[RMDB]
RNA sequence: GGGAACGACUCGAGUAGAGUCGAAAACGCAUGCAAAGUUGCGUACACACUCAAAACGGAUCCAGCAUCUAUCAUGCGAACAAUAGCAACCAUUGACCAAUUGAUAGUUGAGGAACAAACGCAACUAUCCGCAAUCAUAGUUCGCUAUGAUUGCGGAAAAAGAAACAACAACAACAAC
Reactivity to 2A3 in 0.01 (KOAc 150mM, MgCl2 10mM, bicine 150mM(pH8.5), 24C), signal-to-noise 1, nucleotides 027 to 126: c000g070c010a020u190g040c090a220a010a120g010u000u000g030c010g010u140a010c070a010c010a040c040u150c080a040a000a060a180c060g010g060a100u040c050c090a070g100c000a010u000c010u100a060u090c030a000u050g000c010g010a000a000c010a000a020u110a110g090c020a020a060c050c010a020u030u020g080a030c080c020a050a140u000u000g020a020u020a010g060u030u000g040a020g050g040a000a000c050a110a170a010c070g020c040a000a000c000u030a110
Reactivity to DMS in 0.01 (KOAc 150mM, MgCl2 10mM, bicine 150mM(pH8.5), 24C), signal-to-noise 1, nucleotides 027 to 126: c110g020c080a030u000g070c220a110a080a170g000u000u000g030c000g030u000a100c080a000c200a190c190u000c020a040a090a070a080c190g040g000a270u000c070c030a080g030c080a120u000c030u000a030u000c000a070u000g000c300g000a040a030c000a000a010u000a100g030c100a160a010c220c090a100u000u000g000a160c150c040a070a170u020u030g000a000u000a000g020u000u000g000a150g010g010a100a040c200a080a020a080c000g000c000a000a000c050u000a140